[RMDB]
RNA sequence: GGGAACGACUCGAGUAGAGUCGAAAAAUGAGAUCCCAUCUUGCACACUGUGCUAAUUUGAGAUUCUCAUGCCUCCUACUUGGAGAGAUCUGGACUAGAAGUCAGGGCAUCUGACUCGGCCAGCCACAAAACGUACAAGGCUUCGGCCUUGUACGAACGUACGCUAGUUGUUCGCAACUAGCGUACGAAAAGAAACAACAACAACAAC
Reactivity to 2A3 in 0.01 (KOAc 150mM, MgCl2 10mM, bicine 150mM(pH8.5), 24C), signal-to-noise 2, nucleotides 027 to 156: a010u000g000a000g000a020u000c010c010c000a010u020c010u020u030g010c010a050c030a110c180u300g000u020g030c090u140a050a070u010u020u010g030a040g000a050u300u070c000u000c010a010u040g050c010c000u010c020c010u100a230c100u090u230g040g000a040g000a030g030a120u020c020u010g000g080a170c030u060a180g010a170a010g100u000c000a010g030g070g150c070a170u100c080u010g000a000c000u000c000g000g000c010c000a000g050c030c010a110c040a020a130a090a030c000g000u000a000c000a000a000g000g000c000u040u170c180g080g000c000c000u000u000g000u000a000c000g000a000a000
Reactivity to DMS in 0.01 (KOAc 150mM, MgCl2 10mM, bicine 150mM(pH8.5), 24C), signal-to-noise 1, nucleotides 027 to 156: a050u020g000a000g020a060u000c010c000c020a020u010c090u000u010g010c000a020c020a190c120u000g000u000g010c000u020a000a020u000u000u010g000a020g000a030u010u000c020u000c000a030u000g020c060c030u000c030c000u000a140c170u000u000g020g000a070g020a130g030a130u000c020u030g010g010a090c000u030a090g000a130a080g030u000c010a040g000g020g050c270a080u000c010u010g000a050c020u000c050g000g030c010c010a030g020c070c030a040c100a070a120a090a220c000g000u010a040c000a000a000g010g030c000u000u000c290g070g000c010c000u000u020g040u000a010c030g000a010a040
Conditions: 150 mM KOAc, 10 mM MgCl2 and 150 mM bicine (pH 8.5), 24 C. This 207-nucleotide RNA was probed chemically with 2A3 and DMS. The DMS profile rests on 2,376 reads. Source: RMDB library M2RFPK, as collected in RNAgym. Values cover nucleotides 27 to 156. 2A3 adducts were read by reverse transcription with SuperScript II with manganese.